Structure probing data (DMS and 2A3) for a 177-nucleotide construct. The RNA was probed in 150 mM KOAc, 10 mM MgCl2 and 150 mM bicine (pH 8.5) at 24 C. For 2A3, 6,281 sequencing reads were counted.
[RMDB]
RNA sequence: GGGAACGACUCGAGUAGAGUCGAAAAUCUUAGCUUAAAGUGCCCAGAUACAAGGAAUGCAUAGCGCUGCUUCGGAUCGGAGGGCUUUGACGUAUUCGCGAGCGCUGAUGGAGUUACUCAAGGAUACUCAGUUAUUAGACUUCGGUCUAAUAACUGAAAAAGAAACAACAACAACAAC
Reactivity to DMS in 0.01 (KOAc 150mM, MgCl2 10mM, bicine 150mM(pH8.5), 24C), signal-to-noise 8, nucleotides 027 to 126: u000c020u000u000a060g020c080u010u020a070a060a070g000u010g010c010c000c020a120g000a060u020a050c110a070a070g010g000a080a050u020g010c040a080u020a090g000c100g020c070u000g000c030u010u000c070g020g000a040u000c030g000g010a130g010g000g010c050u000u010u010g010a070c110g010u000a020u010u010c040g000c300g000a040g010c300g010c030u010g000a110u010g000g010a080g010u010u020a100c040u000c030a060a210g000g000a050u010a030c080
Reactivity to 2A3 in 0.01 (KOAc 150mM, MgCl2 10mM, bicine 150mM(pH8.5), 24C), signal-to-noise 6, nucleotides 027 to 126: u050c030u050u060a060g080c030u080u160a050a040a030g050u080g070c000c000c000a040g020a060u150a070c060a030a040g100g040a190a030u130g020c030a060u090a120g070c050g000c040u090g030c020u050u050c040g070g020a060u030c040g030g050a060g090g050g010c000u030u030u050g040a020c000g020u050a050u050u040c020g000c020g030a010g020c030g040c070u020g020a080u110g050g040a050g020u080u060a080c010u030c060a050a020g060g000a020u020a060c020
Annotation:
Source: RMDB library OK1LIB, as collected in RNAgym. High 2A3 reactivity points to a flexible backbone, as in loops and unpaired stretches. For 2A3 the reverse transcriptase was SuperScript II with manganese. For DMS, 17,877 sequencing reads were counted.